[RMDB]
RNA sequence: GGGAACGACUCGAGUAGAGUCGAAAAGGGGAUGUUUUGGGAUUCGACAGGCGUAGAUUCGCGUUGACUGCGAUUCGUAGGUCACGUCUACGUUAAAAACGUCACAGUUAAAUUAUAACUGCAAAUAACGAAAAUUCUUACGCAGUAGCUGCUUAGUGACAGAUCGGAUGUUCGCAUCCGAUCUGUCAAAAGAAACAACAACAACAAC
Reactivity to 2A3 in 0.01 (KOAc 150mM, MgCl2 10mM, bicine 150mM(pH8.5), 24C), signal-to-noise 2, nucleotides 027 to 156: g050g000g000g010a050u040g030u000u000u010u070g100g010g000a020u050u080c050g040a000c040a010g000g000c030g030u020a000g000a070u030u140c060g000c020g060u020u050g010a030c040u000g000c010g080a120u120u120c020g030u020a010g040g040u030c020a000c000g030u000c000u000a000c030g000u000u020a020a000a030a050a050c020g030u040c000a000c000a060g000u020u020a050a290a160u150u080a070u080a190a060c000u000g030c040a000a070a120u110a200a050c010g070a060a050a050a080u210u090c060u080u030a020c050g000c020a000g010u000a030g030c090u080g000c000u090u130a060g020u050